[RMDB]
RNA sequence: GGGAACGACUCGAGUAGAGUCGAAAAGGUGAUACUGGUGUCGGUAAAAGUCACCUAGCUUAUUCGGCACUUAAGGCAUUAUCUGAUCACACUAAAAAAAUGGGUAUAUUCAUCAACGUGGUUGACCUAUUAGCCAAAAUAAAAGAGGACUUCAGCCACUCUCAGAUAUUUUCGAAUAUCUGAGAGUAAAAGAAACAACAACAACAAC
Reactivity to DMS in 0.01 (KOAc 150mM, MgCl2 10mM, bicine 150mM(pH8.5), 24C), signal-to-noise 3, nucleotides 027 to 156: g040g020u000g010a020u000a020c050u010g030g000u020g040u020c010g030g030u010a070a080a090a130g020u000c080a110c050c080u010a170g000c040u000u010a130u010u010c040g040g020c020a030c010u000u000a110a140g030g000c020a060u000u010a040u000c040u000g000a190u010c030a090c040a120c080u000a000a000a060a070a090a110a100u010g010g000g020u000a100u000a090u000u000c030a060u000c030a070a070c130g010u000g010g010u000u010g000a050c020c010u000a090u010u000a110g000c030c030a040a040a050a100u000a040a060a060a180g000a120g030g000a060c060u000u000c050a070g020c100c170
Reactivity to 2A3 in 0.01 (KOAc 150mM, MgCl2 10mM, bicine 150mM(pH8.5), 24C), signal-to-noise 6, nucleotides 027 to 156: g030g000u010g010a020u050a090c050u080g010g010u010g010u020c020g010g050u100a150a160a050a040g070u120c050a090c090c030u030a040g020c010u040u030a050u130u150c010g000g000c010a000c000u080u130a090a040g040g000c030a060u050u050a050u120c030u060g060a040u060c020a010c030a040c140u230a090a060a010a000a010a030a100u080g020g000g060u090a100u030a050u190u160c090a110u050c030a060a070c070g040u050g020g000u030u040g020a030c010c000u030a080u090u060a040g030c020c020a050a090a040a060u120a030a070a020a010g070a030g000g020a020c010u020u010c080a010g030c020c010

An RNA of 207 nucleotides, treated with DMS and 2A3 and read out base by base. DMS adducts were read by reverse transcription with MarathonRT. The data come from the RNA Mapping Database (RMDB), library OK3TST. 2A3 adducts were read by reverse transcription with SuperScript II with manganese. Conditions: 150 mM KOAc, 10 mM MgCl2 and 150 mM bicine (pH 8.5), 24 C. The DMS profile rests on 5,767 reads.